The record gives the reactivity of an RNA of 177 nucleotides to DMS and 2A3.
For 2A3 the reverse transcriptase was SuperScript II with manganese.
[RMDB]
RNA sequence: GGGAACGACUCGAGUAGAGUCGAAAACUCUGCUAAUUCGUUAGCAGAGGUACACUGGGACGGGUCGGGAGGCGGAUACUCGCGGUCCCAAGAAGAAUCCAGCAAGCACAUUAUUCGUAAUGUGCAAGUACUACCGUAUAUUCGUAUACGGUAGUACAAAAGAAACAACAACAACAAC
Reactivity to DMS in 0.01 (KOAc 150mM, MgCl2 10mM, bicine 150mM(pH8.5), 24C), signal-to-noise 8, nucleotides 027 to 126: c000u000c000u000g010c000u000a010a020u000u010c180g020u000u000a010g010c000a010g010a000g010g000u000a040c130a180c060u000g000g000g020a070c060g000g030g020u010c040g000g000g010a070g010g000c100g010g000a120u000a060c020u000c020g000c030g000g010u010c000c000c020a050a050g010a120a120g000a110a100u000c010c020a120g010c180a100a130g000c000a010c000a010u000u000a030u000u010c190g010u000a010a000u000g010u000g000c000a050a070
Reactivity to 2A3 in 0.01 (KOAc 150mM, MgCl2 10mM, bicine 150mM(pH8.5), 24C), signal-to-noise 9, nucleotides 027 to 126: c000u000c000u000g000c000u010a000a030u080u060c210g070u060u020a000g000c000a000g000a000g000g010u030a040c070a010c040u020g010g000g040a010c020g050g030g120u150c020g030g060g020a020g030g090c120g090g050a090u120a180c020u020c030g110c010g040g030u050c000c000c000a000a010g040a010a010g040a010a050u030c020c010a020g050c090a140a040g000c000a010c000a010u010u030a020u060u090c210g050u050a000a000u010g000u000g000c000a000a010